[RMDB]
RNA sequence: GGGAACGACUCGAGUAGAGUCGAAAACGCUGGGCAUAUUGGAUCCGACCAGUGGGAGCUGAAGCGCGCACGGCGAGGAUCACUGGAAUCGGAUCAGGUGCCUGUGCUGAAGCGCGCACGGCAACCGAAAGGUGCGAAAGUAUGGUUCGCCAUACAAAACACAGUUCCAAUUCGUUGGAACUGUGUUAAAAGAAACAACAACAACAAC
Reactivity to DMS in 0.01 (KOAc 150mM, MgCl2 10mM, bicine 150mM(pH8.5), 24C), signal-to-noise 1, nucleotides 027 to 156: c120g010c040u000g040g070g050c020a010u000a140u030u000g020g010a040u010c000c010g020a040c000c020a030g000u000g000g040g000a070g020c010u000g020a030a070g000c010g050c010g010c000a300c060g020g000c000g000a050g070g000a030u000c000a000c000u000g000g000a090a280u000c030g020g000a030u010c000a050g090g020u010g000c000c000u020g030u010g000c000u000g010a190a110g030c060g000c020g000c040a200c070g030g000c010a050a300c070c010g010a080a110a160g020g030u000g000c030g040a090a130a160g010u010a000u010g000g000u000u000c300g050c010c010a010u000a000c010a070a070
Reactivity to 2A3 in 0.01 (KOAc 150mM, MgCl2 10mM, bicine 150mM(pH8.5), 24C), signal-to-noise 2, nucleotides 027 to 156: c100g000c020u040g010g000g000c020a020u050a220u160u300g130g010a000u000c000c010g000a000c010c000a000g000u000g010g020g000a010g000c000u000g010a060a000g000c010g010c000g000c020a020c030g010g010c010g040a240g000g010a000u000c000a000c000u000g010g010a150a200u050c020g000g000a000u020c000a020g000g000u000g000c000c010u000g000u000g000c010u050g010a050a050g000c000g000c000g000c000a010c000g000g000c010a030a050c010c000g000a080a020a000g040g000u040g030c050g030a130a070a030g000u010a010u000g020g050u020u080c150g100c090c000a010u020a010c030a010a160
The record gives the reactivity of an RNA of 207 nucleotides to DMS and 2A3. For DMS the reverse transcriptase was MarathonRT. For 2A3, 2,597 sequencing reads were counted. Source: RMDB library RNAMAK, as collected in RNAgym. The RNA was probed in 150 mM KOAc, 10 mM MgCl2 and 150 mM bicine (pH 8.5) at 24 C. The DMS profile rests on 1,861 reads. Reactivities are given for positions 27 through 156.